[RMDB]
This 177-nucleotide RNA was probed chemically with 2A3 and DMS.

RNA sequence: GGGAACGACUCGAGUAGAGUCGAAAAGGAGUGUACAGAGUGAUGACUCGCAGACUGCUAGGUUCAACACAGGUUGGAGUGGGAGUCAUGCAAGAGGGAGUCUUCCACACCAUGUGGCACGUUACAAGACUCGUAUCCAAUUCGUUGGAUACGAGUCAAAAGAAACAACAACAACAAC
Reactivity to 2A3 in 0.01 (KOAc 150mM, MgCl2 10mM, bicine 150mM(pH8.5), 24C), signal-to-noise 8, nucleotides 027 to 126: g130g050a080g010u030g010u050a060c020a010g090a010g070u050g050a090u070g030a020c010u010c050g020c020a020g030a110c030u080g030c010u080a030g140g110u040u040c020a040a020c030a030c070a160g190g140u070u050g030g020a070g030u020g010g010g020a010g010u010c030a090u110g030c030a110a060g020a100g100g130g010a020g010u000c000u020u000c040c000a010c010a020c010c020a080u060g010u040g060g000c040a010c070g040u050u080a040c050a150a020
Reactivity to DMS in 0.01 (KOAc 150mM, MgCl2 10mM, bicine 150mM(pH8.5), 24C), signal-to-noise 4, nucleotides 027 to 126: g000g000a060g000u010g000u010a030c040a060g000a170g020u020g030a070u020g000a050c020u000c030g030c040a030g010a090c040u010g000c040u000a110g010g010u000u010c030a040a110c020a150c270a080g020g010u000u000g020g000a090g010u000g000g000g010a020g020u000c020a070u030g010c080a140a030g010a110g020g010g000a040g010u000c020u000u010c050c020a020c030a100c100c080a100u010g000u000g010g010c030a010c030g000u020u040a030c130a110a100
The RNA was probed in 150 mM KOAc, 10 mM MgCl2 and 150 mM bicine (pH 8.5) at 24 C. For DMS the reverse transcriptase was MarathonRT. For 2A3 the reverse transcriptase was SuperScript II with manganese.